[RMDB]
RNA sequence: GGGAACGACUCGAGUAGAGUCGAAAACUAUUCCAUUUGGUACCAGUGGCCACAUGGUCGGUGGGGCAUUAGUUGCUAUUGUAUUUAUGGCUCCUGAAGCUGCUGUUCUUGUAUUCACUGCAGUAUACGAUAUCAUAAUGUUCGCAUUAUGAUAUCGAAAAGAAACAACAACAACAAC
Reactivity to DMS in 0.01 (KOAc 150mM, MgCl2 10mM, bicine 150mM(pH8.5), 24C), signal-to-noise 5, nucleotides 027 to 126: c080u010a100u020u020c010c020a060u020u010u020g020g010u010a070c070c020a050g030u010g010g000c020c010a050c090a060u010g000g000u010c060g000g010u000g000g000g000g000c120a060u020u010a040g020u010u000g010c010u010a050u010u000g000u030a040u030u020u020a040u010g000g000c020u010c020c020u010g010a050a130g010c010u000g000c020u000g010u010u010c090u010u010g010u010a080u020u010c050a050c060u000g020c070a060g000u020a080u010a190
Reactivity to 2A3 in 0.01 (KOAc 150mM, MgCl2 10mM, bicine 150mM(pH8.5), 24C), signal-to-noise 9, nucleotides 027 to 126: c030u060a110u100u070c020c010a040u060u040u110g080g000u060a090c010c020a080g060u050g060g000c020c000a070c040a090u090g030g000u030c050g020g020u060g030g030g030g000c030a040u040u090a050g050u030u050g000c010u050a050u100u130g120u080a120u050u240u040a090u090g040g000c000u010c020c010u030g030a070a020g010c030u040g000c010u020g050u110u040c040u070u130g100u080a120u040u100c040a020c060u050g020c040a030g080u050a030u030a110